An RNA of 177 nucleotides, treated with 2A3 and read out base by base. Values cover nucleotides 27 to 126.

RNA sequence: GGGAACGACUCGAGUAGAGUCGAAAAAAUGCAUGCAAACUUGCAUUCGCCCCGGCGCUGUUGGAAUAGUACGAAAAGCAAUGGCAGCGUACGACUGCCGCCCGGGGAAGCGCGUGAGCAAAAGAGCGAUGCACCAGUCCUUCGGGACUGGUGCAUCAAAAGAAACAACAACAACAAC
Reactivity to 2A3 in 0.01 (KOAc 150mM, MgCl2 10mM, bicine 150mM(pH8.5), 24C), signal-to-noise 1, nucleotides 027 to 126: a000a000u060g000c180a010u000g000c040a240a300a050c000u080u060g000c000a110u080u060c060g000c050c000c000c000g020g000c050g050c000u000g000u000u060g020g220a300a050u090a040g080u000a000c000g000a120a060a210a060g040c080a000a110u300g140g000c040a100g000c000g000u010a000c010g000a000c000u000g000c000c020g020c040c010c000g070g000g000g000a030a080g050c110g020c000g130u110g040a050g110c050a010a010a010a010g040a000g030c050
The data come from the RNA Mapping Database (RMDB), library OK1LIB. For 2A3, 368 sequencing reads were counted. 2A3 adducts were read by reverse transcription with SuperScript II with manganese. The reactions ran in a buffer of 150 mM KOAc, 10 mM MgCl2 and 150 mM bicine (pH 8.5), at 24 C.